[RMDB]
RNA sequence: GGGAACGACUCGAGUAGAGUCGAAAAGAUGUCUGAUCGUACAUCAUGGCGACGUACUGGUACCAUGCGCUAGCUAGUGAGUACACGUACGACGCUAGGUACAUCUAGUGAUCAGCGGUACUACUAGGCGCCAAAGUCGUUUCGACGACUUUGGCGCAAAAGAAACAACAACAACAAC
Reactivity to 2A3 in 0.01 (KOAc 150mM, MgCl2 10mM, bicine 150mM(pH8.5), 24C), signal-to-noise 1, nucleotides 027 to 126: g030a030u100g040u030c000u000g030a100u060c060g010u070a020c000a020u190c040a140u100g040g000c000g000a000c000g040u010a010c010u030g000g040u030a010c010c010a020u110g010c070g000c050u040a080g000c010u030a030g090u040g180a100g010u020a010c090a010c000g000u030a010c050g010a010c000g000c010u000a020g000g000u050a080c060a140u070c100u150a070g110u030g160a100u030c000a010g000c010g000g060u110a030c000u000a020c030u090a020g020
Reactivity to DMS in 0.01 (KOAc 150mM, MgCl2 10mM, bicine 150mM(pH8.5), 24C), signal-to-noise 2, nucleotides 027 to 126: g000a120u000g010u010c030u000g000a040u000c050g010u000a020c030a020u010c070a200u000g000g030c020g010a080c010g010u000a020c040u000g000g030u000a010c010c050a110u000g000c040g020c300u030a050g030c000u000a060g000u000g010a090g010u010a000c000a030c120g020u000a020c010g020a080c000g040c000u000a010g010g030u020a000c120a150u020c150u000a150g000u030g000a020u010c000a130g030c000g040g000u010a040c080u000a110c180u000a090g010